[RMDB]
RNA sequence: GGGAACGACUCGAGUAGAGUCGAAAACAAUGGAGGUUCGCCUCCAUUGAAAGCGCAACCCAUCUCAACUUCAAGGGCAGGGAAAAGAGAAAGAAGGGAUAAAAAGCUACCCGUUCGCGGGUAGCAAGAAUAGUAAAAACUUCGGUUUUUACUAUUCAAAAGAAACAACAACAACAAC
Reactivity to DMS in 0.01 (KOAc 150mM, MgCl2 10mM, bicine 150mM(pH8.5), 24C), signal-to-noise 3, nucleotides 027 to 126: c000a020a020u000g000g010a020g030g020u000u010c240g010c000c010u000c000c000a010u000u010g000a030a080a070g020c160g010c150a070a140c020c010c010a080u010c050u000c030a070a110c120u010u010c090a070a080g000g000g000c050a040g000g000g000a030a030a090a090g000a100g000a060a040a070g010a070a070g000g000g010a110u000a040a050a100a120a090g000c000u000a010c000c000c000g000u000u010c180g050c020g030g000g000u000a000g010c000a010a010
Reactivity to 2A3 in 0.01 (KOAc 150mM, MgCl2 10mM, bicine 150mM(pH8.5), 24C), signal-to-noise 3, nucleotides 027 to 126: c000a000a010u000g010g000a010g000g020u060u070c160g040c040c000u000c010c000a000u000u010g000a000a010a000g120c060g020c050a070a050c010c010c020a080u030c040u010c020a070a110c030u140u080c080a060a070g050g000g000c010a010g010g010g080a010a160a010a010g070a030g030a040a070a000g030a030a030g000g010g010a010u140a110a160a010a020a000g000c000u000a000c000c000c000g010u010u020c300g010c010g020g020g010u000a000g000c000a000a000